RNA sequence: GGGAACGACUCGAGUAGAGUCGAAAAAUUUCGACAAAGGGCGACGGUCCUCAGUGCUCUUACUCUUUUCUGAUAAAGAGGAGACUGGUGGACUCGUCGCCCGAGUUCGAAUAGGAGCCACGUGCCGAGAGAAGAGAUGCGGUAGGGAGAAGGACCUCCCUUGAAGUAUGUUCGCAUACUUCAAGGGAAAAGAAACAACAACAACAAC
Reactivity to 2A3 in 0.01 (KOAc 150mM, MgCl2 10mM, bicine 150mM(pH8.5), 24C), signal-to-noise 2, nucleotides 027 to 156: a000u010u010u030c010g000a010c030a000a190a030g000g000g030c010g010a010c000g010g010u000c010c000u000c000a050g020u180g260c050u040c060u060u170a200c010u030c010u040u060u020u080c210u290g090a130u190a260a000a000g000a000g020g000a000g040a000c000u000g080g020u170g280g000a010c120u100c210g010u000c010g000c000c000c000g010a000g000u000u040c000g000a000a030u050a050g090g000a030g060c000c020a040c060g100u140g030c010c010g100a070g010a000g010a060a010g030a020g000a000u120g070c000g000g000u040a070g040g030g000a120g010a000a070g010g000a020c020c000u000
Chemical mapping of a 207-nucleotide RNA with 2A3. Source: RMDB library VIROID, as collected in RNAgym. Conditions: 150 mM KOAc, 10 mM MgCl2 and 150 mM bicine (pH 8.5), 24 C. The 2A3 profile rests on 725 reads.